[RMDB]
RNA sequence: GGGAACGACUCGAGUAGAGUCGAAAAAUAUAUUGUAGUAGCAAUCAUCGUUCUAGUGUGGACUUACUUCAUUGUCAUUAAAGAAAUUCUUCCUAAAAAUAUAGGAUUUAUUUCAUUAGUAAUUCUAGUAGCAUAUCUCAUUCGUGAGAUAUGCUACAAAAGAAACAACAACAACAAC
Reactivity to DMS in 0.01 (KOAc 150mM, MgCl2 10mM, bicine 150mM(pH8.5), 24C), signal-to-noise 1, nucleotides 027 to 126: a100u020a050u090a020u010u000g010u020a100g020u050a110g000c040a030a080u000c050a110u020c000g050u010u000c040u010a070g050u020g000u000g000g000a060c040u010u000a090c070u060u000c090a080u010u000g000u050c070a080u050u040a040a050a110g000a000a010a000u000u000c030u040u000c000c000u000a060a120a210a030a110u020a090u030a000g000g000a010u000u000u000a020u000u000u030c010a160u000u000a060g010u010a170a030u000u000c000u000a050
Reactivity to 2A3 in 0.01 (KOAc 150mM, MgCl2 10mM, bicine 150mM(pH8.5), 24C), signal-to-noise 3, nucleotides 027 to 126: a000u130a020u050a050u070u120g050u030a080g000u050a000g090c040a010a070u050c000a070u030c100g120u140u050c060u080a070g010u020g010u010g140g000a020c020u050u060a050c040u140u070c040a070u050u100g050u080c060a060u060u290a030a120a020g040a000a000a010u030u000c000u020u030c000c000u070a080a110a040a050a020u300a080u020a130g000g000a000u020u000u000a000u000u020u000c010a050u020u050a020g020u120a110a100u050u020c020u110a000

Conditions: 150 mM KOAc, 10 mM MgCl2 and 150 mM bicine (pH 8.5), 24 C. This 177-nucleotide RNA was probed chemically with DMS and 2A3. Values are in units of 0.01, from 0 to 300, in steps of 10. DMS adducts were read by reverse transcription with MarathonRT.